[RMDB]
RNA sequence: GGGAACGACUCGAGUAGAGUCGAAAAUCGAAGCGAAAGCGAGUCUGAAUAGGGCGAAUUAGUUAGUGGGGGCAGACGCGAAACUUGGUGAUCUACCCAUGGCCAGGUUGAAGCGAAGGUAACACUUGUCAAUUUCAUAGUUCGCUAUGAAAUUGACAAAAGAAACAACAACAACAAC
Reactivity to DMS in 0.01 (KOAc 150mM, MgCl2 10mM, bicine 150mM(pH8.5), 24C), signal-to-noise 1, nucleotides 027 to 126: u010c060g010a200a110g010c010g000a060a070a060g020c050g030a020g050u000c010u000g000a140a020u010a040g020g000g000c000g020a090a130u000u030a080g000u000u000a040g010u000g040g010g030g000g040c080a060g000a060c030g010c010g000a170a000a040c040u000u030g000g000u000g000a080u010c170u020a020c100c130c060a170u010g000g010c020c010a010g000g000u000u010g010a120a110g000c000g000a040a020g010g000u000a030a090c100a090c090u000u000
Structure probing data (DMS) for a 177-nucleotide construct.
Conditions: 150 mM KOAc, 10 mM MgCl2 and 150 mM bicine (pH 8.5), 24 C.
It was measured as part of the RMDB library RFMREP.